[RMDB]
RNA sequence: GGGAACGACUCGAGUAGAGUCGAAAACCGAGGUCGCGAGACCUCGGACACUCCGAGAGGAGUGAAACUGGCCAAGUGCAAUCGCGGCGAAUGAAGCCGGCCAGCGGACGGUAGCACAUGCGAGGGAUCGCUAGCUACCGACCGAAGCGAUGCACAACAUAUGAUCCCCGUUCGCGGGGAUCAUAUGAAAAGAAACAACAACAACAAC
Reactivity to 2A3 in 0.01 (KOAc 150mM, MgCl2 10mM, bicine 150mM(pH8.5), 24C), signal-to-noise 1, nucleotides 027 to 156: c000c010g010a000g030g020u000c000g000c040g050a000g000a060c000c000u000c000g000g000a000c000a000c010u000c000c000g020a040g000a040g060g000a020g000u010g030a080a080a000c000u010g000g050c040c000a090a080g030u000g000c030a080a150u000c000g000c000g000g010c020g040a120a130u220g080a120a010g000c000c000g030g020c010c020a000g000c000g010g000a000c000g000g000u000a010g000c030a060c060a300u220g020c020g000a010g010g220g010a180u030c010g000c000u000a000g000c010u010a020c010c000g010a000c010c000g000a030a010g000c000g010a000u000g000c000a000c030a030a040